[RMDB]
An RNA of 177 nucleotides, treated with 2A3 and DMS and read out base by base. Source: RMDB library M2PK50, as collected in RNAgym.
RNA sequence: GGGAACGACUCGAGUAGAGUCGAAAACCUCUAGUAUUCGUACUAGAGGCACAUGCCGCCCCAACGGCUUCCUGACGGGGCGGAUUCACUUUAAAUGGAGGAAAGCCGCUGUGUUCGCACAGCGGAAGAACGCAUAGAUCUUCGGAUCUAUGCGUUCAAAAGAAACAACAACAACAAC
Reactivity to 2A3 in 0.01 (KOAc 150mM, MgCl2 10mM, bicine 150mM(pH8.5), 24C), signal-to-noise 1, nucleotides 027 to 126: c000c010u000c010u010a020g000u000a010u050u080c180g040u020a020c000u000a000g010a000g010g000c040a030c000a100u160g050c000c000g000c010c000c000c000a010a040c050g060g010c000u040u030c000c000u000g000a000c020g000g000g000g000c000g020g000a010u070u080c040a020c040u070u130u210a100a200a130u260g000g040a010g000g000a030a040a020g080c000c000g010c000u000g000u010g030u020u030c130g070c110a000c010a000g000c000g000g000a000a010
Reactivity to DMS in 0.01 (KOAc 150mM, MgCl2 10mM, bicine 150mM(pH8.5), 24C), signal-to-noise 1, nucleotides 027 to 126: c010c010u020c000u000a010g020u000a000u000u030c180g010u020a010c000u020a000g000a030g030g060c080a050c160a110u000g000c000c020g010c000c010c000c030a070a280c100g000g000c090u010u000c020c000u000g000a060c300g000g000g010g020c000g010g000a000u000u000c060a040c100u020u010u010a110a070a120u000g010g000a040g020g040a110a080a110g010c000c000g010c000u010g020u000g000u010u010c170g030c010a020c000a010g040c000g000g000a000a030
For 2A3 the reverse transcriptase was SuperScript II with manganese. Reactivities are given for positions 27 through 126.